[RMDB]
RNA sequence: GGGAACGACUCGAGUAGAGUCGAAAAAGAGUGUUGAUCAAGAAGCAGGAAGUGGAUAUUCUGGAUCUGAAAGAAACCCUUAGGCUGAGAAUACUUUCUGAGGACAUAGAGAGGGAUAUGCUCUGUGUAUCCUCUCAUGUUUCGACAUGAGAGGAUAAAAAGAAACAACAACAACAAC
Reactivity to DMS in 0.01 (KOAc 150mM, MgCl2 10mM, bicine 150mM(pH8.5), 24C), signal-to-noise 5, nucleotides 027 to 126: a020g010a060g020u000g020u010u000g000a090u010c060a100a100g010a100a110g010c050a030g000g010a050a060g020u010g020g010a110u020a080u010u000c050u000g010g010a100u010c080u020g000a090a060a100g000a080a080a130c070c040c030u000u000a080g020g010c030u000g010a050g010a070a060u010a070c070u000u000u000c030u010g000a100g010g000a060c060a030u000a070g000a040g000a060g000g010g010a090u010a050u010g000c030u000c040u000g020u000g000
Reactivity to 2A3 in 0.01 (KOAc 150mM, MgCl2 10mM, bicine 150mM(pH8.5), 24C), signal-to-noise 2, nucleotides 027 to 126: a000g080a030g030u070g010u070u060g010a080u070c020a010a040g030a040a010g080c050a010g050g040a080a020g070u070g040g070a040u070a110u180u010c030u020g070g000a110u040c030u070g100a080a120a060g030a070a160a070c020c010c000u040u080a020g000g000c030u050g030a020g020a090a090u090a120c030u030u070u000c020u020g020a060g000g050a020c020a060u040a010g040a010g000a040g030g080g000a030u050a020u120g020c010u020c020u040g040u000g030
The record gives the reactivity of an RNA of 177 nucleotides to DMS and 2A3. Values cover nucleotides 27 to 126. Source: RMDB library OK2TRN, as collected in RNAgym. The RNA was probed in 150 mM KOAc, 10 mM MgCl2 and 150 mM bicine (pH 8.5) at 24 C. DMS adducts were read by reverse transcription with MarathonRT. The 2A3 profile rests on 1,872 reads. For DMS, 5,431 sequencing reads were counted.